[RMDB]
RNA sequence: GGGAACGACUCGAGUAGAGUCGAAAAGUAACAUAAGCACCGAUGAUGAGAACACAGAACGACAUACAGCAGCUGAUGUGAAUAAGGAUCAUCACACGCUGUUCGGUCUUCGUAUGUAAUAAACAUAGCGGUACAGAAGGUUCGCCUUCUGUACCGCAAAAGAAACAACAACAACAAC
Reactivity to 2A3 in 0.01 (KOAc 150mM, MgCl2 10mM, bicine 150mM(pH8.5), 24C), signal-to-noise 1, nucleotides 027 to 126: g040u020a000a020c040a090u150a040a130g020c000a090c070c120g050a070u090g010a020u070g010a100g040a050a010c030a040c010a170g010a080a060c070g010a010c030a010u150a060c020a000g000c010a010g000c170u060g010a120u000g060u010g040a020a140u200a210a020g190g010a070u010c000a010u010c010a030c000a010c010g000c000u000g020u090u000c020g010g000u000c000u050u010c090g000u110a030u100g010u000a040a130u110a180a010a040c000a000u250a140
Reactivity to DMS in 0.01 (KOAc 150mM, MgCl2 10mM, bicine 150mM(pH8.5), 24C), signal-to-noise 1, nucleotides 027 to 126: g020u010a170a030c130a060u010a090a040g040c120a090c020c020g000a090u020g000a000u010g030a140g000a110a020c110a130c070a110g030a020a030c180g000a030c100a120u010a040c030a030g010c000a140g010c110u000g010a080u000g020u000g020a080a130u000a140a190g060g000a060u000c170a030u000c000a000c070a170c080g010c000u000g010u000u000c040g030g040u000c050u000u000c030g000u000a060u000g000u020a030a070u000a050a040a070c160a080u000a070